[RMDB]
RNA sequence: GGGAACGACUCGAGUAGAGUCGAAAAAGCUAGAAGACAGAGAAGUAACGGUGCUUUCAACAUUCUGACAGUUCUAGUCUAGAAUUCUAUACCUAGUUUUAUGAUUUAAGCUUGAAUGUAGGCUAAACACAUUUUAGACAUGCAAAGUCUCAUAGAAGACUAUUUCCGUAUUCGUACGGAAAUAGUCAAAAGAAACAACAACAACAAC
Reactivity to DMS in 0.01 (KOAc 150mM, MgCl2 10mM, bicine 150mM(pH8.5), 24C), signal-to-noise 2, nucleotides 027 to 156: a100g030c060u010a090g000a120a120g020a180c070a160g010a100g010a050a090g030u000a100a130c050g020g000u000g010c040u000u000u000c010a050a100c030a090u000u000c020u010g000a090c070a150g000u000u000c090u000a080g000u000c070u000a070g000a040a040u010u000c000u000a160u010a060c030c000u000a070g000u000u000u000u010a070u040g030a140u000u000u020a040a120g030c010u000u000g020a070a030u010g020u010a010g020g040c020u000a020a040a070c050a090c070a090u000u000u000u020a050g030a020c060a130u000g020c040a060a130a130g000u000c010u000c020a090u020a270g010a090a240
Reactivity to 2A3 in 0.01 (KOAc 150mM, MgCl2 10mM, bicine 150mM(pH8.5), 24C), signal-to-noise 3, nucleotides 027 to 156: a000g000c020u020a000g010a070a010g020a080c110a030g080a020g030a140a020g030u120a080a020c060g090g030u090g010c040u030u130u110c040a050a070c010a090u020u020c000u050g040a030c020a020g030u040u060c030u100a030g010u000c010u040a030g100a060a080u170u070c030u110a050u100a100c010c010u010a040g010u020u020u150u040a050u060g100a120u040u170u110a040a000g050c030u030u040g080a040a010u060g060u050a030g060g000c040u070a010a060a000c040a000c010a020u050u040u100u120a010g000a010c040a020u120g030c040a200a080a040g010u010c030u000c080a080u130a140g070a200a000
Structure probing data (DMS and 2A3) for a 207-nucleotide construct. For DMS, 2,164 sequencing reads were counted. For 2A3 the reverse transcriptase was SuperScript II with manganese.